The data come from the RNA Mapping Database (RMDB), library RFM100.
Chemical mapping of a 177-nucleotide RNA with 2A3.
The 2A3 profile rests on 520 reads.
The RNA was probed in 150 mM KOAc, 10 mM MgCl2 and 150 mM bicine (pH 8.5) at 24 C.
[RMDB]
RNA sequence: GGGAACGACUCGAGUAGAGUCGAAAAGCCUCGUGGCGGUCCAGGCCUGGUCGCCAUACGCCCGCCCACCAAUCCGCUUCUAACCACCCCGGCCGCAUAACCUCUUAGGGCGUUCCAACGCGGCGCCGGUGUUCGUGCGUUUCGACGCACGAACACCAAAAGAAACAACAACAACAAC
Reactivity to 2A3 in 0.01 (KOAc 150mM, MgCl2 10mM, bicine 150mM(pH8.5), 24C), signal-to-noise 1, nucleotides 027 to 126: g000c000c000u080c040g000u110g060g020c050g000g000u140c000c000a050g040g130c010c100u090g000g000u040c000g000c030c030a010u000a000c010g000c010c010c010g010c010c000c020a000c000c000a010a010u010c000c050g000c030u070u020c030u080a000a090c050c040a030c020c000c010c000g030g010c000c000g000c000a000u050a220a070c000c020u070c010u080u140a090g050g030g020c030g040u050u060c040c100a170a050c040g060c110g030g140c020g030c020c000

2A3 adducts were read by reverse transcription with SuperScript II with manganese.